Chemical mapping of a 177-nucleotide RNA with DMS and 2A3.

RNA sequence: GGGAACGACUCGAGUAGAGUCGAAAAGUAAGAUGAUUCGUCAUCUUACGAACCCGAUGAAGCGGCACAUACCGACCUUCAUACAUCUAAGAGUGCAAAUAAUGGCGCGUGGUUUCGACCACGCGAAACGAGGAUCUAUCUUCGGAUAGAUCCUCGUAAAAGAAACAACAACAACAAC
Reactivity to DMS in 0.01 (KOAc 150mM, MgCl2 10mM, bicine 150mM(pH8.5), 24C), signal-to-noise 2, nucleotides 027 to 126: g000u000a000a030g000a010u000g000a050u010u040c210g010u010c000a010u000c000u020u010a000c010g000a090a160c030c010c030g050a030u000g010a020a050g000c000g010g020c070a130c270a170u010a090c010c010g020a140c260c040u000u010c030a050u000a180c160a070u020c090u000a080a040g010a160g010u000g000c110a040a080a020u000a100a090u000g010g000c040g020c000g000u000g000g010u010u010u030c180g000a010c000c000a010c000g000c000g000a000a010
Reactivity to 2A3 in 0.01 (KOAc 150mM, MgCl2 10mM, bicine 150mM(pH8.5), 24C), signal-to-noise 2, nucleotides 027 to 126: g000u000a000a000g000a000u000g000a000u030u090c070g090u030c090a010u010c000u000u010a000c000g000a010a020c000c000c000g000a030u050g010a000a010g040c000g030g000c070a050c030a270u230a080c030c000g060a100c010c030u030u030c000a030u030a110c080a060u100c030u190a150a060g120a030g100u140g070c110a030a070a140u170a090a110u200g240g000c030g010c000g000u000g030g000u000u090u060c160g040a040c000c000a000c020g020c000g000a000a000
The 2A3 profile rests on 1,246 reads. DMS adducts were read by reverse transcription with MarathonRT. The reactions ran in a buffer of 150 mM KOAc, 10 mM MgCl2 and 150 mM bicine (pH 8.5), at 24 C.